Structure probing data (2A3 and DMS) for a 177-nucleotide construct. Conditions: 150 mM KOAc, 10 mM MgCl2 and 150 mM bicine (pH 8.5), 24 C. For 2A3, 1,216 sequencing reads were counted.

RNA sequence: GGGAACGACUCGAGUAGAGUCGAAAAGGAGGAAGCCGAUAGCAAAACACUGGCCUGAUGAACAAGAAGCAGAUACUAGGCUUAUUCGAUGGGUAAAAGGUCUCAAAUACUCAAAGCCCUAAUACACGUCAGUAAAACAGUUCGCUGUUUUACUGACAAAAGAAACAACAACAACAAC
Reactivity to 2A3 in 0.01 (KOAc 150mM, MgCl2 10mM, bicine 150mM(pH8.5), 24C), signal-to-noise 2, nucleotides 027 to 126: g070g000a030g010g090a040a000g030c060c020g050a060u090a040g030c040a010a090a070a110c040a020c080u050g070g050c000c040u040g020a110u120g020a090a030c060a020a090g060a040a030g050c030a000g010a110u020a090c010u010a040g020g020c000u000u020a040u120u130c040g020a020u080g050g000g000u030a000a000a000a240g000g020u010c000u040c120a050a080a010u120a060c010u000c040a030a010a050g000c000c010c000u050a140a080u150a080c060a000c090
Reactivity to DMS in 0.01 (KOAc 150mM, MgCl2 10mM, bicine 150mM(pH8.5), 24C), signal-to-noise 2, nucleotides 027 to 126: g000g030a090g000g010a070a160g000c020c040g010a100u000a090g010c040a060a110a160a090c110a060c080u010g000g020c050c040u000g040a150u010g030a090a060c050a070a070g000a080a060g020c060a000g000a130u000a080c110u000a020g000g010c030u000u020a090u010u000c080g030a110u010g000g000g010u010a030a050a090a080g000g000u010c110u000c090a040a060a070u000a070c050u010c070a010a130a170g000c010c010c020u000a070a050u020a080c260a080c260